[RMDB]
RNA sequence: GGGAACGACUCGAGUAGAGUCGAAAAGGCUGUCGAUCUGCUCCAAGACAGCCACUGUUGUCGGGUUUUUACCUUAGGCUCUUUUGAGCGACGACAGACGAUCCUCGGAGCAGAUUAGGAUCGGAAAGGGUUGGAGGUAGUUCGCUACCUCUGACCCAAAAGAAACAACAACAACAAC
Reactivity to 2A3 in 0.01 (KOAc 150mM, MgCl2 10mM, bicine 150mM(pH8.5), 24C), signal-to-noise 9, nucleotides 027 to 126: g000g000c000u000g010u020c020g040a060u020c000u020g000c000u000c000c000a020a000g000a000c010a000g000c000c000a010c000u000g010u010u010g000u010c030g010g030g020u040u050u040u170u290a080c010c010u060u170a200g080g000c010u020c010u050u260u160u300g010a000g000c000g000a000c000g000a000c000a010g020a030c070g040a060u040c010c020u040c050g000g000a000g000c000a000g000a000u000u070a040g010g010a030u080c060g010g030a120a110a090
Reactivity to DMS in 0.01 (KOAc 150mM, MgCl2 10mM, bicine 150mM(pH8.5), 24C), signal-to-noise 8, nucleotides 027 to 126: g010g020c000u000g010u000c030g000a100u010c010u000g000c000u000c000c020a110a150g000a020c010a010g000c010c010a050c000u000g010u000u000g020u000c020g010g000g000u010u020u050u020u060a030c000c000u010u030a130g020g010c010u000c000u020u040u030u040g000a010g020c000g020a010c010g000a010c020a010g000a070c160g010a090u000c010c010u010c280g000g000a020g010c010a010g010a120u040u030a080g010g000a180u000c020g010g000a120a120a070